Structure probing data (2A3 and DMS) for a 177-nucleotide construct.
The 2A3 profile rests on 10,862 reads.
The reactions ran in a buffer of 150 mM KOAc, 10 mM MgCl2 and 150 mM bicine (pH 8.5), at 24 C.
It was measured as part of the RMDB library OK1LIB.
[RMDB]
RNA sequence: GGGAACGACUCGAGUAGAGUCGAAAAGACGCCAGCCGUAUCCGUACCAGCGGAAUGGGUCCGGCGAACCCGAUCGCCAGCAACAGUACGGCAGAAGGUAAAGCGCAAAACCGCCGCGUCGAAAUUACUUUUAAUGGAGGUUCGCCUCCAUUAAAAGAAAAGAAACAACAACAACAAC
Reactivity to 2A3 in 0.01 (KOAc 150mM, MgCl2 10mM, bicine 150mM(pH8.5), 24C), signal-to-noise 9, nucleotides 027 to 126: g060a010c020g010c010c020a030g010c000c010g060u140a050u040c010c000g020u040a170c030c040a050g040c010g010g040a040a060u150g050g010g010u070c060c080g030g010c020g020a030a030c000c000c000g020a100u060c050g020c040c010a060g030c020a050a080c020a090g060u110a040c020g010g000c030a010g060a080a030g040g010u130a090a070a080g030c030g010c070a070a090a020a050c030c010g000c010c010g020c010g040u040c020g030a060a050a060u170u120a120
Reactivity to DMS in 0.01 (KOAc 150mM, MgCl2 10mM, bicine 150mM(pH8.5), 24C), signal-to-noise 6, nucleotides 027 to 126: g000a100c010g010c000c050a200g000c010c010g010u010a030u000c020c040g020u000a110c190c240a210g010c010g010g000a080a060u020g010g010g010u010c050c060g000g000c020g010a050a060c010c000c010g000a130u010c040g000c020c000a080g010c050a070a060c110a100g030u020a030c040g000g000c050a080g000a130a100g000g010u010a040a090a100g000c070g000c060a060a050a110a110c090c020g010c020c030g030c040g000u020c020g020a070a080a060u010u030a110